[RMDB]
Chemical mapping of a 177-nucleotide RNA with DMS.
RNA sequence: GGGAACGACUCGAGUAGAGUCGAAAAGAUAUGGAUGUAAGCAAGGCAGUGCAGCAUGUAAGACGACUCUCGGAAACGAGAGAGAACGUUAUCAUGCUGCACUGCUGAUGACCUUACAUCCUAAGUCGUACUCCCUAAUGUUCGCAUUAGGGAGUACAAAAGAAACAACAACAACAAC
Reactivity to DMS in 0.01 (KOAc 150mM, MgCl2 10mM, bicine 150mM(pH8.5), 24C), signal-to-noise 3, nucleotides 027 to 126: g010a070u000a300u000g000g010a020u000g000u000a000a000g000c050a180a120g020g010c000a030g040u010g010c000a020g000c000a000u050g000u020a160a300g000a030c010g010a210c000u000c000u010c010g010g010a090a150a290c010g000a000g010a030g000a040g010a070a100c020g000u010u010a210u000c010a000u000g020c000u000g000c010a000c000u010g000c000u000g000a040u000g000a090c300c000u000u020a000c000a020u000c000c000u000a050a150g000u010c050

The RNA was probed in 150 mM KOAc, 10 mM MgCl2 and 150 mM bicine (pH 8.5) at 24 C. Reactivities are given for positions 27 through 126.